[RMDB]
RNA sequence: GGGAACGACUCGAGUAGAGUCGAAAACACUUGGAGUUCGCUCCAAGUGAAACCAUUCCCGAUUGGCAAUAAUACCGCAGGCGGUAAAGCGGAACAAAUAAGAAAGCGAAGACUUCGGUCUUCGCAACACAGGAAGAGUCUUCGGACUCUUCCUGUGAAAAGAAACAACAACAACAAC
Reactivity to 2A3 in 0.01 (KOAc 150mM, MgCl2 10mM, bicine 150mM(pH8.5), 24C), signal-to-noise 2, nucleotides 027 to 126: c020a010c010u000u000g020g000a000g000u070u100c200g180c130u000c000c010a010a000g000u010g000a030a000a000c040c000a040u030u060c000c000c000g040a110u080u170g110g000c030a120a180u150a200a040u070a160c000c030g000c080a080g070g160c040g090g050u150a120a100a000g020c040g020g020a040a040c050a040a060a070u230a160a110g130a230a050a000g000c010g000a020a000g010a000c000u000u100c150g030g030u010c000u000u010c000g030c010a000a000
Reactivity to DMS in 0.01 (KOAc 150mM, MgCl2 10mM, bicine 150mM(pH8.5), 24C), signal-to-noise 1, nucleotides 027 to 126: c000a010c000u000u000g000g000a010g030u010u010c210g020c020u000c000c000a000a000g030u000g000a040a040a030c220c120a250u000u000c030c000c000g010a090u000u000g010g030c130a060a080u010a100a110u000a060c020c000g010c020a100g010g020c050g020g000u000a060a050a140g010c000g010g010a110a110c220a110a050a050u000a060a130g000a030a050a130g010c000g010a020a000g010a010c000u020u020c110g010g020u000c000u000u000c000g000c000a010a010

Conditions: 150 mM KOAc, 10 mM MgCl2 and 150 mM bicine (pH 8.5), 24 C. This 177-nucleotide RNA was probed chemically with 2A3 and DMS. For 2A3, 1,110 sequencing reads were counted.